[RMDB]
RNA sequence: GGGAACGACUCGAGUAGAGUCGAAAAUAAAGUGUUAGAGGAUGAAAUGCGGACAGUAAUAGACAGCAAACAACACAGUGUGCCAUGGAGAUGCGGACUAUGUUUCACUGAUUUGAAUGUGCGCAUAGAUAUAUAGGUGAUUCGUCACCUAUAUAUCAAAAGAAACAACAACAACAAC
Reactivity to 2A3 in 0.01 (KOAc 150mM, MgCl2 10mM, bicine 150mM(pH8.5), 24C), signal-to-noise 9, nucleotides 027 to 126: u190a010a080a020g060u060g060u110u110a070g020a050g140g040a070u110g100a110a100a060u050g040c020g020g050a010c010a020g040u130a050a080u070a080g120a040c030a020g070c050a040a060a050c030a030a010c030a030c020a050g010u150g030u020g140c040c020a050u080g070g030a300g010a060u100g040c030g010g010a010c010u020a020u070g020u000u040u040c050a030c010u030g070a210u080u040u100g180a190a080u050g010u050g050c010g000c010a010u040a070
Reactivity to DMS in 0.01 (KOAc 150mM, MgCl2 10mM, bicine 150mM(pH8.5), 24C), signal-to-noise 9, nucleotides 027 to 126: u040a080a070a090g010u010g010u010u010a050g010a270g000g000a090u020g010a050a080a050u020g010c020g000g010a040c030a040g000u020a090a090u020a080g010a070c070a040g020c160a050a060a090c270a020a050c070a050c050a030g010u010g000u000g000c070c050a050u010g010g020a100g000a150u010g010c040g000g000a060c030u000a050u010g000u000u000u010c150a070c020u000g010a080u010u010u010g010a080a100u000g000u000g000c060g010c020a020u010a050